Structure probing data (DMS and 2A3) for a 177-nucleotide construct.
RNA sequence: GGGAACGACUCGAGUAGAGUCGAAAAGAUAUGGAAUUCCUGAAUGAUCGAUAAGCUACGCGUUCGGAAACGAACGGUAGCUUUUGACGAUCGCGGAAUUCCUAAGUCAAAGUUAGGUUCGCCUAACCCCAGUACUGUAGUUCGCUACAGUACUGGGAAAAGAAACAACAACAACAAC
Reactivity to DMS in 0.01 (KOAc 150mM, MgCl2 10mM, bicine 150mM(pH8.5), 24C), signal-to-noise 3, nucleotides 027 to 126: g000a020u000a300u000g000g000a020a000u000u000c000c000u010g040a120a090u010g000a000u000c000g020a160u000a040a020g020c000u000a000c000g020c010g020u010u000c000g000g000a140a090a150c020g000a000a000c010g000g020u000a000g000c010u000u000u010u010g000a220c130g000a000u000c000g020c130g020g010a030a000u000u000c000c000u000a000a060g000u000c030a120a060a120g010u000u000a010g000g000u000u020c300g000c000c000u000a030a020c020
Reactivity to 2A3 in 0.01 (KOAc 150mM, MgCl2 10mM, bicine 150mM(pH8.5), 24C), signal-to-noise 2, nucleotides 027 to 126: g020a000u110a060u120g000g000a030a000u030u000c050c020u130g170a160a300u300g000a040u000c080g040a070u010a240a000g060c000u030a000c080g160c020g300u000u000c000g000g030a070a130a070c000g010a000a000c000g000g000u020a000g000c000u000u000u000u000g020a010c010g000a010u000c020g000c010g020g010a010a000u000u010c000c000u040a100a010g000u000c040a200a100a050g000u010u000a020g010g120u020u060c300g110c070c010u020a020a030c000
The 2A3 profile rests on 2,480 reads.